[RMDB]
RNA sequence: GGGAACGACUCGAGUAGAGUCGAAAAUAAGUUCUACUGCCCUUUAUUGUUGGGUGCACCCUGGGACCCAGUAAUACCCGGGGGGAGGCGGGGUAAACCCAUACUAUGGGAACUGCUGGGUUCCUCGACAGUCUCUUCUUCGGAAGAGACAAAAGAAACAACAACAACAAC
Reactivity to DMS in 0.01 (KOAc 150mM, MgCl2 10mM, bicine 150mM(pH8.5), 24C), signal-to-noise 5, nucleotides 027 to 129: u070a070a080g030u010u070c070u020a060c080u000g040c030c010c050u000u020u020a120u000u000g010u020u010g020g020g020u020g050c070a090c030c040c050u060g020g030g020a000c030c010c010a050g020u060a030a060u040a190c000c030c030g020g000g020g020g010g010a020g020g060c070g000g020g040g030u030a040a050a070c050c000c000a110u040a110c180u000a070u050g000g000g000a090a080c140u000g010c040u020g030g020g020u000u020c010c030u080c110g000a050c120a110
Reactivity to 2A3 in 0.01 (KOAc 150mM, MgCl2 10mM, bicine 150mM(pH8.5), 24C), signal-to-noise 7, nucleotides 027 to 129: u120a040a020g060u030u060c040u050a160c040u070g030c000c010c030u030u100u050a190u060u090g090u050u040g000g010g030u030g020c030a130c010c000c000u020g000g000g000a000c000c000c000a000g000u010a050a040u050a130c000c000c000g000g000g010g000g000g000a030g000g030c030g000g000g000g020u020a040a080a060c000c000c000a020u080a100c150u160a110u140g000g000g040a070a030c020u030g000c000u020g000g000g000u020u020c000c010u010c010g030a030c020a040

About this RNA
The record gives the reactivity of an RNA of 170 nucleotides to DMS and 2A3. It was measured as part of the RMDB library 15KLIB. Reactivities are given for positions 27 through 129. The RNA was probed in 150 mM KOAc, 10 mM MgCl2 and 150 mM bicine (pH 8.5) at 24 C. For DMS, 20,036 sequencing reads were counted.